[RMDB]
RNA sequence: GGGAACGACUCGAGUAGAGUCGAAAAGAUAUGGAGAAUAUACAGCAACAGCUACGAGGUCGGAAACGACCUGUAGACAUGCUGAUAUUCUCCUAAGUCAAAACGGUGCAACUUCGGUUGCACCGAAGCAUUAGUUAGAGUUCGCUCUAACUAAUGCAAAAGAAACAACAACAACAAC
Reactivity to 2A3 in 0.01 (KOAc 150mM, MgCl2 10mM, bicine 150mM(pH8.5), 24C), signal-to-noise 8, nucleotides 027 to 126: g010a000u030a000u050g010g010a010g010a030a010u070a030u230a300c010a000g000c130a150a200c070a260g010c020u010a000c030g300a020g010g000u000c000g000g000a010a000a000c010g000a000c010c000u000g000u000a000g000a020c040a170u300g000c000u000g010a000u000a000u010u010c000u000c000c000u000a000a000g000u000c000a010a010a100a140c030g020g000u000g000c000a010a000c000u070u100c290g200g000u000u000g000c000a000c010c000g000a000a010
Reactivity to DMS in 0.01 (KOAc 150mM, MgCl2 10mM, bicine 150mM(pH8.5), 24C), signal-to-noise 5, nucleotides 027 to 126: g000a010u000a020u010g010g000a020g000a030a000u000a000u000a160c000a000g010c010a150a070c250a130g010c000u000a010c000g010a030g010g010u000c000g010g010a010a000a020c010g010a000c000c000u000g010u000a010g000a030c040a300u010g010c000u000g000a030u000a000u000u000c000u000c000c010u000a000a060g000u000c010a140a080a100a240c030g010g000u010g000c000a000a000c000u000u020c220g020g000u000u000g010c010a000c000c000g000a010a070